[RMDB]
Source: RMDB library OK1LIB, as collected in RNAgym. An RNA of 177 nucleotides, treated with 2A3 and read out base by base. Values cover nucleotides 27 to 126.
RNA sequence: GGGAACGACUCGAGUAGAGUCGAAAAAUAAAAGUCCUUUACAAAACGCCAAGUCCUGUCCCAAAUUGCCAAAUUGUUCGACCCUGCAGGCUGGUUAGCGCCAUUUAUCGUUCGAGCUAAAAUUUGCACUGCGGCAAAAUUUCGAUUUUGCCGCAGUAAAAGAAACAACAACAACAAC
Reactivity to 2A3 in 0.01 (KOAc 150mM, MgCl2 10mM, bicine 150mM(pH8.5), 24C), signal-to-noise 1, nucleotides 027 to 126: a010u230a010a030a050a010g020u030c000c000u160u000u130a080c070a060a090a010a000c040g000c000c000a130a000g000u000c010c000u020g100u060c030c000c000a050a040a030u150u080g000c000c000a060a060a270u000u130g030u030u020c010g010a100c000c000c000u000g010c010a050g000g000c000u130g000g000u000u070a080g030c000g090c060c010a020u100u120u000a100u100c030g000u010u060c050g040a040g000c030u000a070a080a150a190u110u060u170g080c070